[RMDB]
Structure probing data (2A3 and DMS) for a 177-nucleotide construct. DMS adducts were read by reverse transcription with MarathonRT. Reactivities are given for positions 27 through 126. The reactions ran in a buffer of 150 mM KOAc, 10 mM MgCl2 and 150 mM bicine (pH 8.5), at 24 C.
RNA sequence: GGGAACGACUCGAGUAGAGUCGAAAAGAUAUGGACGUGUUCAUUAUGGAGACGUUAUAUCGGAAACGAUAUUUCGUCGUUGAAAUAAUGAGACACGUCCUAAGUCAAAGGCUACCUUCGGGUAGCCGCAGUUGAUUAAGUUCGCUUAAUCAACUGCAAAAGAAACAACAACAACAAC
Reactivity to 2A3 in 0.01 (KOAc 150mM, MgCl2 10mM, bicine 150mM(pH8.5), 24C), signal-to-noise 5, nucleotides 027 to 126: g040a030u070a060u150g010g000a000c000g010u000g000u000u030c010a010u010u020a020u040g060g010a040g000a030c000g010u020u010a010u000a000u010c000g000g040a050a100a010c010g000a000u000a010u010u010u010c020g010u010c030g160u080u020g010a000a010a010u020a000a010u040g020a100g050a080c010a000c000g000u000c000c000u000a000a010g010u000c030a090a110a050g000g000c000u010a010c010c000u070u160c300g140g000g000u000a000g000c010c000
Reactivity to DMS in 0.01 (KOAc 150mM, MgCl2 10mM, bicine 150mM(pH8.5), 24C), signal-to-noise 6, nucleotides 027 to 126: g010a050u000a300u000g000g000a010c000g030u000g010u000u000c000a020u000u000a010u000g000g010a070g010a010c000g020u000u000a000u000a000u000c000g010g000a130a090a250c000g010a010u000a000u000u000u000c010g030u000c010g000u000u010g010a190a140a020u000a010a010u010g000a120g010a020c000a010c000g020u000c000c000u000a010a090g010u010c050a110a140a150g000g000c000u000a000c000c000u000u020c210g030g010g020u000a000g010c000c010